[RMDB]
RNA sequence: GGGAACGACUCGAGUAGAGUCGAAAAAUAGUCAGUACGCUGACUGAGGGAAACGGGAGCCGGGCUUGGGACAAGAGCCAUCCCAAGUCCAAGGCCAAGUAGGCUCUAGUGAUGGUACGCCAUCACAAAAACUGGUCUACCUUCGGGUAGACCAGAACUCACUUUUCAUCUUCGGAUGAAAAGUGAGAAAAGAAACAACAACAACAAC
Reactivity to 2A3 in 0.01 (KOAc 150mM, MgCl2 10mM, bicine 150mM(pH8.5), 24C), signal-to-noise 1, nucleotides 027 to 156: a010u080a000g020u010c000a000g010u030a040c120g050c150u020g000a030c040u030g030a140g000g030g030a050a140a210c180g100g020g010a070g050c060c040g000g020g000c000u010u000g000g000g000a020c020a100a080g000a000g000c000c000a020u000c000c000c000a000a000g000u010c000c000a000a020g020g000c010c000a050a050g100u090a090g070g000c000u020c000u000a070g050u000g000a000u000g000g030u110a060c300g000c040c000a000u000c000a000c000a010a080a000a000a000c010u000g010g020u040c000u000a000c000c000u010u060c170g080g000g000u020a000g000a000c000c010a000g000a000a000
An RNA of 207 nucleotides, treated with 2A3 and read out base by base. Conditions: 150 mM KOAc, 10 mM MgCl2 and 150 mM bicine (pH 8.5), 24 C.